RNA sequence: GGGAACGACUCGAGUAGAGUCGAAAAGUCAGUGCAUGCACGUGUAUGUCUGGGAGUACAAAUGGGUGCGACUGGUUGUAGGGAACUAGCUAUGUGCCUUCUAUUAGGCCAUGACAGUCAAACUGAUUCAGUAUCUAUUCUUCGGAAUAGAUACUGAAAAAGAAACAACAACAACAAC
Reactivity to 2A3 in 0.01 (KOAc 150mM, MgCl2 10mM, bicine 150mM(pH8.5), 24C), signal-to-noise 4, nucleotides 027 to 126: g050u040c050a000g000u000g080c020a020u030g060c030a010c100g100u110g020u050a050u070g070u010c050u050g030g030g060a080g030u050a020c030a050a110a060u110g050g000g000u020g020c030g060a030c010u010g020g070u090u100g090u060a070g020g030g020a030a000c000u010a020g040c040u060a010u050g060u170g010c020c000u020u080c040u080a290u290u130a030g000g000c000c010a010u030g020a020c010a000g040u060c030a050a050a090c040u020g000a060u010
Reactivity to DMS in 0.01 (KOAc 150mM, MgCl2 10mM, bicine 150mM(pH8.5), 24C), signal-to-noise 5, nucleotides 027 to 126: g010u000c040a030g020u010g020c040a030u000g010c030a040c300g010u000g010u000a010u010g010u010c060u010g000g010g020a170g000u010a050c070a040a080a070u000g010g010g010u000g000c060g020a030c060u000g000g010u010u010g010u000a080g000g010g010a090a060c030u000a090g010c020u000a020u000g000u010g030c000c000u000u000c300u010a160u020u000a010g010g020c000c010a020u010g010a040c020a040g000u010c080a080a100a140c060u000g000a240u000